Source: RMDB library TTRDEL, as collected in RNAgym. Chemical mapping of a 177-nucleotide RNA with DMS and 2A3. The DMS profile rests on 6,883 reads.
RNA sequence: GGGAACGACUCGAGUAGAGUCGAAAAGAUAUGGACCGACUCCGAUAAGCUCCACUCGGAAACGAGUGUGAGCUUUUGACGGAGGGGUCCUAAGUCAAACUUUCAUGUACUUCGGUACAUGAAAGAAUCAUAUCCAGAAGUUCGCUUCUGGAUAUGAAAAAGAAACAACAACAACAAC
Reactivity to DMS in 0.01 (KOAc 150mM, MgCl2 10mM, bicine 150mM(pH8.5), 24C), signal-to-noise 5, nucleotides 027 to 126: g010a040u000a260u010g000g000a010c000c000g000a150c010u000c000c000g000a140u000a030a020g020c000u000c000c000a010c000u000c000g010g000a080a060a120c000g010a020g010u000g000u020g010a000g010c000u000u000u010u000g020a200c060g000g000a020g020g000g010g000u000c010c000u000a000a050g010u000c020a140a120a220c010u000u000u000c000a000u000g000u000a000c000u000u010c190g010g010u000a000c000a010u000g000a000a000a010g000a070a110
Reactivity to 2A3 in 0.01 (KOAc 150mM, MgCl2 10mM, bicine 150mM(pH8.5), 24C), signal-to-noise 1, nucleotides 027 to 126: g000a020u070a030u070g000g010a000c000c000g300a300c050u030c010c010g110a180u060a250a040g010c000u000c010c010a000c010u010c000g010g000a070a020a030c000g010a000g000u020g000u030g000a010g000c000u000u010u000u030g010a000c000g010g000a000g020g000g010g000u000c000c000u000a070a010g010u020c000a070a060a170c000u000u000u000c000a010u010g000u010a010c010u000u070c300g150g000u000a000c000a000u000g000a000a000a000g010a000a040

For 2A3, 3,173 sequencing reads were counted.